An RNA of 177 nucleotides, treated with 2A3 and DMS and read out base by base.
RNA sequence: GGGAACGACUCGAGUAGAGUCGAAAAUAAAAAAUACAACAAUUUCAAAUAGGCAAUUUCCUGUGCAUGCUAAAGUAGGUGCAAGAUAUGUCCCAGCAGGUAAAAGGCUAGGUUAAAAUCAUCAUGAAGAAAGAUCAAAAUUCGUUUUGAUCUUUCUAAAAGAAACAACAACAACAAC
Reactivity to 2A3 in 0.01 (KOAc 150mM, MgCl2 10mM, bicine 150mM(pH8.5), 24C), signal-to-noise 1, nucleotides 027 to 126: u070a010a050a010a000a030a040u190a020c010a080a000c010a020a100u100u290u300c070a060a160a100u140a090g000g080c010a020a060u000u040u040c000c000u000g040u100g020c000a000u020g040c010u090a250a080a060g110u090a050g100g050u030g020c040a050a040g040a200u170a040u130g050u010c010c010c000a000g000c020a010g000g060u120a030a140a110a060g040g000c030u020a020g090g100u050u090a030a030a060a030u070c050a020u030c020a050u170g010a010
Reactivity to DMS in 0.01 (KOAc 150mM, MgCl2 10mM, bicine 150mM(pH8.5), 24C), signal-to-noise 2, nucleotides 027 to 126: u040a000a050a080a050a020a060u000a080c060a040a080c040a070a150u010u000u010c080a000a090a110u000a080g030g010c040a040a080u000u000u000c010c010u000g010u000g010c050a010u010g000c060u020a020a060a150g000u010a030g020g010u000g000c040a060a090g000a130u010a070u000g020u010c030c010c040a140g000c050a070g010g000u010a010a070a040a160g000g000c020u000a030g010g000u020u010a000a060a110a060u000c110a010u000c100a060u020g030a220

Values cover nucleotides 27 to 126. For 2A3 the reverse transcriptase was SuperScript II with manganese. It was measured as part of the RMDB library OK2TRN.